[RMDB]
RNA sequence: GGGAACGACUCGAGUAGAGUCGAAAAGUGGUACACGCAUCAUCCAGACCAACCUGCUCUUCCACGGUCAUACGUGGCCGACGCCGUUUCCUGCGCGGUUUAGCACCAGCAUCGUCGUCUAAAGCGGCAAUCAUCUGCGAAGGUGCACGGCCGGUUCCCAUUGCCCCAGUUUCGACUGGGGCAAUGGAAAAGAAACAACAACAACAAC
Reactivity to 2A3 in 0.01 (KOAc 150mM, MgCl2 10mM, bicine 150mM(pH8.5), 24C), signal-to-noise 1, nucleotides 027 to 156: g110u100g000g060u070a050c120a010c090g030c010a080u020c010a070u050c130c070a020g120a110c010c050a020a020c000c040u010g010c040u040c010u160u050c040c050a000c000g000g010u040c060a030u010a200c170g020u040g000g000c020c040g100a150c110g040c000c000g020u000u110u060c010c000u050g000c070g000c040g090g100u010u070u160a050g010c000a000c000c020a000g000c000a050u030c070g000u010c000g020u040c080u180a060a100a000g020c000g020g000c000a040a120u200c090a080u030c040u040g020c030g190a300a190g000g000u010g000c030a030c010g000g040c000c020g000g000u070u020c000